Overview
Chemical mapping of a 177-nucleotide RNA with 2A3 and DMS. The DMS profile rests on 2,132 reads. It was measured as part of the RMDB library OK1LIB. Conditions: 150 mM KOAc, 10 mM MgCl2 and 150 mM bicine (pH 8.5), 24 C.

[RMDB]
RNA sequence: GGGAACGACUCGAGUAGAGUCGAAAAGAGCAUGUCGGUCCAGACGGCGGUCGCCGGGGUCACGGCUGGCAUCGAGGCAGCCAUUCGGCAGUCCGCAGAUAUCCGCGAACCGAUCCCGUCGCGAUUGGAGGAGGAACAGGUUCGCCUGUUCCUCCUCAAAAGAAACAACAACAACAAC
Reactivity to 2A3 in 0.01 (KOAc 150mM, MgCl2 10mM, bicine 150mM(pH8.5), 24C), signal-to-noise 3, nucleotides 027 to 126: g070a000g010c050a060u090g020u070c020g040g040u040c050c020a030g030a030c040g030g000c020g030g000u030c040g000c040c000g000g000g000g030u100c080a040c120g020g000c070u020g040g000c020a020u090c120g020a070g130g000c030a020g010c010c000a090u110u070c010g030g000c030a060g070u070c000c010g000c010a000g010a000u110a050u080c030c000g020c030g010a030a040c050c010g020a000u040c020c010c040g040u020c030g000c010g030a060u080u180g070
Reactivity to DMS in 0.01 (KOAc 150mM, MgCl2 10mM, bicine 150mM(pH8.5), 24C), signal-to-noise 2, nucleotides 027 to 126: g020a080g020c040a090u060g020u010c000g030g000u030c000c040a160g000a210c040g020g000c010g000g040u010c030g000c010c000g000g000g000g000u100c150a100c150g000g030c000u020g000g020c130a150u000c200g010a270g000g050c000a050g000c000c020a180u000u000c010g000g030c030a100g020u000c000c030g020c120a110g000a060u010a110u020c070c020g000c010g000a090a080c050c000g020a050u020c010c010c030g010u020c010g000c040g000a130u050u010g030